[RMDB]
RNA sequence: GGGAACGACUCGAGUAGAGUCGAAAAGUGGUGAUACCUGUAGAGGGAGAUGAACAGGAUGCCGAAUCUGAAGAGGUCCAGGCAGAUAGAGCCGUCAGCCCUGUUCCUACCGUGGACAGAUCCAGCCCUUGCCUAUAAGCUUCGGCUUAUAGGCAAGAAAAGAAACAACAACAACAAC
Reactivity to 2A3 in 0.01 (KOAc 150mM, MgCl2 10mM, bicine 150mM(pH8.5), 24C), signal-to-noise 4, nucleotides 027 to 126: g080u070g030g020u020g020a040u120a180c000c020u030g070u090a060g050a110g050g050g010a080g020a130u130g000a040a020c010a020g010g000a040u090g010c010c010g050a030a020u060c020u070g080a070a030g040a060g110g050u020c030c040a060g040g000c020a000g040a090u160a040g060a030g040c010c000g030u040c020a000g010c000c010c000u010g030u020u010c000c000u040a090c000c040g060u120g010g000a000c010a010g020a040u030c010c020a020g010c030c000
Reactivity to DMS in 0.01 (KOAc 150mM, MgCl2 10mM, bicine 150mM(pH8.5), 24C), signal-to-noise 3, nucleotides 027 to 126: g010u020g030g000u030g000a140u040a030c070c020u000g000u050a060g010a190g000g000g000a120g000a070u000g030a080a040c040a060g010g020a140u010g030c040c040g050a080a070u010c010u030g000a120a130g040a080g000g040u020c020c030a040g010g040c070a040g000a070u010a090g020a170g010c050c060g000u010c070a060g010c070c010c000u000g000u010u000c010c040u000a050c050c070g050u030g020g000a100c040a050g000a110u030c050c050a130g000c060c030